[RMDB]
This 177-nucleotide RNA was probed chemically with 2A3 and DMS. It was measured as part of the RMDB library RFM100.
RNA sequence: GGGAACGACUCGAGUAGAGUCGAAAAGAAAGAAAGAAAGACCCUUACUUGGAUCUGCAAUUAGUAUUUUAAUCAUAGAUUGUAUUUAGUUAGUUUUUAAUACUAACUGCAGAUUCAAGUGAGGGAAUCAUACAAAAGCGUUCGCGCUUUUGUAUGAAAAAGAAACAACAACAACAAC
Reactivity to 2A3 in 0.01 (KOAc 150mM, MgCl2 10mM, bicine 150mM(pH8.5), 24C), signal-to-noise 3, nucleotides 027 to 126: g060a040a080a000g110a040a080a010g050a050a100a010g120a070c000c000c000u000u000a000c000u010u000g000g000a000u000c000u000g000c000a000a000u000u000a000g000u000a000u010u010u000u030a030a020u080c050a080u100a150g030a130u070u190g070u220a120u120u250u010a070g060u040u080a020g010u000u020u000u010u060a000a000u000a010c000u000a000a010c000u010g000c000a000g000a000u000u010c000a000a000g000u000g000a000g000g000g010a000a000
Reactivity to DMS in 0.01 (KOAc 150mM, MgCl2 10mM, bicine 150mM(pH8.5), 24C), signal-to-noise 1, nucleotides 027 to 126: g020a120a060a180g020a090a070a120g000a060a170a160g000a170c030c040c000u000u000a030c000u010u000g030g020a000u000c000u000g000c010a020a030u000u000a020g000u000a010u000u000u000u000a020a020u000c020a100u010a150g000a010u010u030g000u030a300u010u040u010a050g000u020u000a050g000u010u010u010u000u000a000a000u000a000c000u000a010a010c050u000g000c000a030g000a000u000u010c000a010a000g000u000g020a000g010g000g000a000a000
Conditions: 150 mM KOAc, 10 mM MgCl2 and 150 mM bicine (pH 8.5), 24 C. The DMS profile rests on 1,772 reads. Values cover nucleotides 27 to 126.